The record gives the reactivity of an RNA of 177 nucleotides to DMS and 2A3. The 2A3 profile rests on 5,454 reads. DMS adducts were read by reverse transcription with MarathonRT.

[RMDB]
RNA sequence: GGGAACGACUCGAGUAGAGUCGAAAAUAACUAAGUCGCCUGACGAAGUCCACCACGACGUCGGUGAACGCGUCGUUGUCGUCGCCGGCGGCGGUGCGCCCCGCGUUGGACAAUUCGACGAACUCCGGUAUUUGAAUAGGUUCGCCUAUUCAAAUACAAAAGAAACAACAACAACAAC
Reactivity to DMS in 0.01 (KOAc 150mM, MgCl2 10mM, bicine 150mM(pH8.5), 24C), signal-to-noise 5, nucleotides 027 to 126: u010a120a190c140u000a140a180g010u000c020g010c080c060u000g030a030c070g010a100a180g010u000c060c050a090c110c090a090c070g010a080c020g010u010c040g000g010u000g010a070a040c030g010c030g000u000c090g010u000u000g010u000c010g010u000c070g030c120c020g010g010c030g020g000c030g000g000u010g000c060g000c060c030c000c040g020c050g020u000u010g010g000a020c040a060a190u000u000c020g000a020c000g000a080a090c090u010c040c060g010
Reactivity to 2A3 in 0.01 (KOAc 150mM, MgCl2 10mM, bicine 150mM(pH8.5), 24C), signal-to-noise 4, nucleotides 027 to 126: u120a040a040c080u080a110a010g020u010c020g080c160c140u170g030a030c040g050a060a020g040u030c030c060a060c030c020a040c070g050a010c010g020u180c020g000g040u090g120a120a050c020g000c000g030u030c020g030u020u050g060u050c030g060u060c020g040c140c050g020g020c040g010g000c010g010g000u080g040c070g030c000c000c020c020g020c000g020u060u050g030g010a010c030a080a130u120u070c020g020a020c010g000a080a040c030u020c050c020g060